[RMDB]
RNA sequence: GGGAACGACUCGAGUAGAGUCGAAAAUUUUAUGAGAACAGGACUUCUGUCCCUUCUUGGUCUUGAGGUCCCUAUAUCAUUUUGCAGACAUUUAGGGAGCAGGAAAAUCCAUCAAGAAGGAAGGUGGUAACUCCUUUCUGAGGACUGGGAUAUGCAACAUUAUAAUGCCCUUCGGGGCAUUAUAAUGAAAAGAAACAACAACAACAAC
Reactivity to 2A3 in 0.01 (KOAc 150mM, MgCl2 10mM, bicine 150mM(pH8.5), 24C), signal-to-noise 2, nucleotides 027 to 156: u110u150u110u090a160u070g030a060g020a050a030c030a060g030g050a040c030u090u030c050u140g090u060c040c000c020u120u110c000u070u120g030g010u000c030u030u040g030a020g040g040u020c000c000c010u040a040u010a000u050c050a000u050u090u160u140g000c000a010g000a120c010a090u020u040u090a000g030g010g020a050g030c030a010g010g050a120a060a040a080u030c010c000a010u020c020a010a050g040a060a010g100g030a020a050g030g010u030g030g000u100a110a100c050u010c050c000u020u130u080c020u030g050a030g010g000a000c070u090g010g020g040a010u060a030u190g040c000a010a020
Reactivity to DMS in 0.01 (KOAc 150mM, MgCl2 10mM, bicine 150mM(pH8.5), 24C), signal-to-noise 2, nucleotides 027 to 156: u010u000u010u010a070u020g010a120g000a110a140c080a050g000g000a050c040u010u000c080u020g010u010c030c000c020u020u000c030u000u000g000g030u000c010u000u000g020a130g020g020u000c000c030c010u000a030u000a070u030c070a190u000u010u010u000g040c170a170g010a090c050a060u010u000u000a070g010g030g020a060g000c040a030g010g000a110a100a080a140u000c010c020a080u000c040a040a070g020a060a110g000g000a050a050g000g020u000g030g000u000a090a080c060u010c020c010u010u000u000c040u010g020a120g030g020a080c070u030g020g000g010a090u000a070u000g000c000a060a160
Structure probing data (2A3 and DMS) for a 207-nucleotide construct. The DMS profile rests on 3,686 reads. The reactions ran in a buffer of 150 mM KOAc, 10 mM MgCl2 and 150 mM bicine (pH 8.5), at 24 C.